RNA sequence: GGGAACGACUCGAGUAGAGUCGAAAAAAUAAGGAAGGUGUAAAAAUUAGAACUAAGAUUCCAUUAUCUAAGGUACAUGGUCUAGAUGUAAAAAAUGUACAGUUAGUAGAUGCUAUAGAUAACAUAGUUUGGGAAAAGAAAUCAUUAGUGACGGAAACCUAAUUAUGCAGUUCGCUGCAUAAUUAGGAAAAGAAACAACAACAACAAC
Reactivity to DMS in 0.01 (KOAc 150mM, MgCl2 10mM, bicine 150mM(pH8.5), 24C), signal-to-noise 2, nucleotides 027 to 156: a070a110u010a040a060g010g000a030a050g000g040u000g000u000a040a030a070a100a150u010u000a060g010a080a090c050u000a070a100g010a250u000u000c030c040a150u020u000a050u000c010u000a050a140g030g030u000a020c000a070u010g010g060u000c050u010a070g010a070u000g020u000a000a060a070a050a070a050u000g000u000a010c040a040g000u000u000a030g030u000a090g010a100u010g000c010u010a190u000a070g010a100u010a020a050c080a120u010a020g030u000u000u010g010g030g000a040a080a050a070g000a080a030a040u000c030a030u000u000a070g010u000g000a100c050g000g020a110a080a150
Reactivity to 2A3 in 0.01 (KOAc 150mM, MgCl2 10mM, bicine 150mM(pH8.5), 24C), signal-to-noise 1, nucleotides 027 to 156: a000a000u140a040a000g050g020a060a000g030g000u040g020u130a100a120a100a050a050u110u120a030g020a080a000c010u020a040a060g040a120u060u020c020c020a030u090u100a030u040c020u040a030a030g030g010u000a000c010a050u040g000g040u000c060u060a040g020a110u090g060u140a000a000a120a000a050a070u070g000u020a020c010a030g030u010u030a000g010u040a010g010a110u060g030c020u010a020u020a050g090a110u040a050a020c020a020u040a040g030u080u060u110g020g000g070a000a140a000a000g050a010a080a030u000c000a010u030u060a010g040u000g050a040c060g000g040a060a000a000

An RNA of 207 nucleotides, treated with DMS and 2A3 and read out base by base. It was measured as part of the RMDB library OK3TST. The RNA was probed in 150 mM KOAc, 10 mM MgCl2 and 150 mM bicine (pH 8.5) at 24 C. 2A3 is a SHAPE reagent: it acylates the 2'-hydroxyl of flexible nucleotides of all four kinds. For 2A3 the reverse transcriptase was SuperScript II with manganese.